RNA sequence: GGGAACGACUCGAGUAGAGUCGAAAACAGAUAUGGAAGCCCAUGAAAUUGAUGAACUGAGAGUUGCUUCCAGUCCAGAGCGCACCAUCUGGAAUUCCAGUCUGAGGUUACAAUUAGAACUCCUGACCUUGCGUAUAUUGUUCGCAAUAUACGCAAGAAAAGAAACAACAACAACAAC
Reactivity to DMS in 0.01 (KOAc 150mM, MgCl2 10mM, bicine 150mM(pH8.5), 24C), signal-to-noise 3, nucleotides 027 to 126: c020a060g010a100u020a110u000g000g000a060a050g020c300c060c040a030u020g000a060a130a070u010u000g000a150u000g010a080a050c020u000g020a170g020a050g010u010u010g030c110u010u000c010c000a020g010u000c010c010a020g010a070g010c080g000c100a070c090c070a090u000c010u000g000g020a050a180u000u000c010c010a060g000u010c020u000g000a060g020g000u000u000a070c110a030a070u010u010a130g010a080a060c070u000c030c020u000g030a110c140
Reactivity to 2A3 in 0.01 (KOAc 150mM, MgCl2 10mM, bicine 150mM(pH8.5), 24C), signal-to-noise 3, nucleotides 027 to 126: c020a000g060a050u130a280u240g030g010a060a000g030c000c030c050a020u150g080a050a110a040u210u180g010a040u070g050a090a030c050u070g010a040g010a000g300u070u140g020c000u010u000c000c000a020g000u010c000c010a030g020a020g110c090g000c040a030c070c000a060u000c020u020g010g000a010a030u070u050c020c000a000g030u000c010u060g040a050g080g000u070u060a100c040a070a090u160u090a100g050a090a010c010u010c030c000u020g040a040c020

The record gives the reactivity of an RNA of 177 nucleotides to DMS and 2A3.
High 2A3 reactivity points to a flexible backbone, as in loops and unpaired stretches.